The record gives the reactivity of an RNA of 177 nucleotides to DMS and 2A3. For 2A3, 6,442 sequencing reads were counted. The data come from the RNA Mapping Database (RMDB), library TTRDES.

RNA sequence: GGGAACGACUCGAGUAGAGUCGAAAAGAUAUGGAGCCAUACACGAGAUCGCCAUCGGAAACGAUGGAGUGGAUCGAUGAGUGUGAUGGCUCCUAAGUCAAAGCACAAGAACUUCGGUUCUUGUGCACUCUGAUCAGAACUUCGGUUCUGAUCAGAGAAAAGAAACAACAACAACAAC
Reactivity to DMS in 0.01 (KOAc 150mM, MgCl2 10mM, bicine 150mM(pH8.5), 24C), signal-to-noise 2, nucleotides 027 to 126: g000a010u010a010u000g010g010a010g010c000c000a010u010a010c010a020c000g000a010g000a020u000c010g010c000c000a000u000c000g010g000a010a010a020c010g000a020u000g000g010a010g010u000g000g010a010u000c000g030a200u000g000a060g000u010g000u000g000a040u000g010g000c000u000c000c000u000a000a060g000u000c000a140a110a150g010c010a000c000a010a020g000a030a010c000u000u010c270g030g010u010u000c000u000u000g020u000g020c000a030
Reactivity to 2A3 in 0.01 (KOAc 150mM, MgCl2 10mM, bicine 150mM(pH8.5), 24C), signal-to-noise 3, nucleotides 027 to 126: g000a020u020a000u070g000g020a000g000c010c000a010u050a000c010a000c020g200a180g010a050u010c010g000c000c000a010u000c010g000g030a000a020a000c010g010a010u000g080g000a020g080u300g190g030a000u000c020g060a130u300g040a010g020u010g000u050g180a070u000g020g000c000u010c010c000u000a000a000g000u000c020a070a120a000g000c000a010c000a010a000g000a010a000c010u090u230c300g180g000u000u010c000u000u020g010u000g000c000a020